RNA sequence: GGGAACGACUCGAGUAGAGUCGAAAAAACAAAGAUGAAAUAACACGGUGCAGGUGGCGUCGUUUCCAUGAUGAUGGCAUAACCUUCCUGCGGCUGCUCGAUGCGGGCCUGACCAUUCCAUCCGGCACAUUUAUCGUGAUUUCGAUCACGAUAAAUGAAAAGAAACAACAACAACAAC
Reactivity to DMS in 0.01 (KOAc 150mM, MgCl2 10mM, bicine 150mM(pH8.5), 24C), signal-to-noise 5, nucleotides 027 to 126: a070a050c080a070a070a060g010a090u000g010a080a050a070u010a090a110c100a080c090g010g010u000g020c030a060g040g020u000g000g000c140g010u000c020g010u000u000u000c020c020a070u010g000a080u000g010a050u000g000g010c160a060u000a100a070c050c060u000u000c030c020u000g000c050g010g000c040u000g010c040u000c050g010a060u000g020c040g010g010g020c030c020u000g010a060c050c040a080u000u000c030c020a050u000c020c050g010g010c100a190
Reactivity to 2A3 in 0.01 (KOAc 150mM, MgCl2 10mM, bicine 150mM(pH8.5), 24C), signal-to-noise 3, nucleotides 027 to 126: a000a000c150a060a070a020g080a090u140g090a070a110a050u150a070a040c070a010c100g070g010u080g020c010a020g010g010u020g040g030c040g000u010c000g010u020u030u010c010c020a020u120g040a060u060g020a020u050g070g000c040a040u030a130a070c020c000u060u090c020c010u040g000c000g030g010c020u040g010c000u010c050g030a030u080g000c040g010g070g000c000c020u020g040a060c000c010a020u060u020c010c000a020u040c030c000g060g000c050a010
Record summary: An RNA of 177 nucleotides, treated with DMS and 2A3 and read out base by base. Reactivities are given for positions 27 through 126. It was measured as part of the RMDB library OK2TST. DMS adducts were read by reverse transcription with MarathonRT. Conditions: 150 mM KOAc, 10 mM MgCl2 and 150 mM bicine (pH 8.5), 24 C. The DMS profile rests on 7,286 reads.